The data come from the RNA Mapping Database (RMDB), library M2RFPK. This 207-nucleotide RNA was probed chemically with DMS and 2A3. Reactivities are given for positions 27 through 156. For DMS the reverse transcriptase was MarathonRT. For 2A3 the reverse transcriptase was SuperScript II with manganese. For 2A3, 2,543 sequencing reads were counted.
RNA sequence: GGGAACGACUCGAGUAGAGUCGAAAAGAACUUUGGCCGGCUCGGAAUAGAAUCAGGGGGUGCAAACUGCCCACUGGCAGAACGGAUUAUAGCAAAUGCGUACCCUAUUGCAAUACAGCCCGGCCAACAUAGACUACUCUAUUCGUAGAGUAGUCAACAAAUGCCAUUGAUUCGUCAAUGGCAUUUGAAAAGAAACAACAACAACAAC
Reactivity to DMS in 0.01 (KOAc 150mM, MgCl2 10mM, bicine 150mM(pH8.5), 24C), signal-to-noise 3, nucleotides 027 to 156: g000a060a090c010u000u000u000g020g020c000c020g010g010c020u000c050g070g010a160a100u010a160g010a120a110u010c050a060g010g000g000g040g010u000g030c050a050a060a170c080u010g030c020c000c100a100c090u000g030g040c050a070g020a180a170c070g000g000a170u000u000a120u000a170g030c040a030a090a130u000g010c030g030u000a090c010c000c000u000a100u000u020g040c030a090a140u000a090c070a050g020c090c020c030g020g030c010c020a010a020c080a100u000a090g020a030c010u000a010c000u010c000u000a070u000u020c240g030u000a010g010a030g010u000a010g020u000c000a020a090
Reactivity to 2A3 in 0.01 (KOAc 150mM, MgCl2 10mM, bicine 150mM(pH8.5), 24C), signal-to-noise 4, nucleotides 027 to 156: g040a050a020c030u020u010u010g000g000c010c000g020g000c030u040c120g020g070a130a100u170a130g050a070a050u220c100a120g000g040g000g000g020u070g040c010a030a070a090c000u010g000c000c010c050a180c220u180g010g000c000a000g050a050a020c020g040g080a080u120u110a140u250a140g070c060a000a090a080u060g020c020g050u110a070c000c010c010u040a090u030u080g080c040a040a030u070a100c020a030g030c010c050c000g000g010c000c000a010a000c000a000u040a000g000a000c010u000a000c010u000c000u000a020u060u040c130g040u020a000g000a000g000u000a000g000u000c000a000a000